[RMDB]
The record gives the reactivity of an RNA of 177 nucleotides to 2A3 and DMS. Conditions: 150 mM KOAc, 10 mM MgCl2 and 150 mM bicine (pH 8.5), 24 C. For DMS the reverse transcriptase was MarathonRT.

RNA sequence: GGGAACGACUCGAGUAGAGUCGAAAAUCAGAUUAUAGUUUUAUCUCAAUUGCAAAUCAUAUAGAUUAUGAAAAAUGGAAUAAUCAUCAAAGAUAUGAGUCAAAUUGUCACAUAUUUCGUAUAAUGGAUGCGAGGUAGUAUUCGUACUACCUCGCAUAAAAGAAACAACAACAACAAC
Reactivity to 2A3 in 0.01 (KOAc 150mM, MgCl2 10mM, bicine 150mM(pH8.5), 24C), signal-to-noise 1, nucleotides 027 to 126: u160c000a010g000a190u000u040a000u080a010g000u110u000u000u000a050u000c040u010c110a040a080u010u070g060c030a070a060a070u010c000a040u010a000u030a100g030a000u000u040a010u080g130a040a050a150a150a000u160g040g030a020a000u090a030a000u000c020a040u090c140a070a040a000g250a110u000a000u000g050a090g050u170c010a020a020a020u050u020g050u000c000a000c000a050u040a000u000u000u010c020g090u040a000u020a110a000u050g170g030
Reactivity to DMS in 0.01 (KOAc 150mM, MgCl2 10mM, bicine 150mM(pH8.5), 24C), signal-to-noise 2, nucleotides 027 to 126: u030c020a180g000a030u000u000a010u000a000g000u000u000u000u000a000u000c110u010c000a000a030u000u000g000c160a090a130a090u000c000a000u000a060u000a010g010a020u000u000a000u020g010a030a060a060a110a220u010g000g030a170a050u000a000a010u000c000a200u010c180a020a130a160g000a010u000a000u000g020a010g010u020c190a030a000a080u000u000g000u020c170a150c300a060u000a010u000u000u010c030g000u000a020u000a000a040u000g030g000
For 2A3 the reverse transcriptase was SuperScript II with manganese. Values cover nucleotides 27 to 126. The DMS profile rests on 1,375 reads.